[RMDB]
RNA sequence: GGGAACGACUCGAGUAGAGUCGAAAACGAACCGGAAAGGUCGCUCGGAGAUCCUGAACCGUAUGGUCCCAUAGGCUGGGAUCGCUUCAAGCCUAGAAUUCAGCAAGUGGACCUUCCUCUCGCGAUAGAGACGAAGAAUCUUCGGAUUCUUCGUCUCAAAAGAAACAACAACAACAAC
Reactivity to DMS in 0.01 (KOAc 150mM, MgCl2 10mM, bicine 150mM(pH8.5), 24C), signal-to-noise 1, nucleotides 027 to 126: c080g010a150a140c100c030g000g030a030a090a040g000g020u030c010g000c100u000c050g000g010a200g000a070u000c060c040u000g010a050a210c040c080g020u000a090u000g000g010u010c020c000c050a190u000a070g000g090c060u000g010g000g000a020u000c150g010c140u030u000c110a050a050g030c030c050u010a030g010a100a080u020u030c070a060g000c060a080a040g050u000g010g010a030c040c030u000u000c000c010u000c050u010c070g000c090g010a090u000a180
Reactivity to 2A3 in 0.01 (KOAc 150mM, MgCl2 10mM, bicine 150mM(pH8.5), 24C), signal-to-noise 2, nucleotides 027 to 126: c040g060a010a010c030c000g020g120a140a030a010g060g010u040c020g030c080u120c110g230g040a140g030a070u190c030c030u040g060a170a090c010c020g060u100a060u150g000g000u000c050c000c000a000u020a060g110g000c020u030g000g070g030a060u090c030g020c010u160u170c060a160a040g020c010c020u060a030g060a040a110u230u120c070a050g030c040a150a110g070u130g060g070a030c000c020u010u000c030c000u040c010u050c030g070c030g040a010u060a150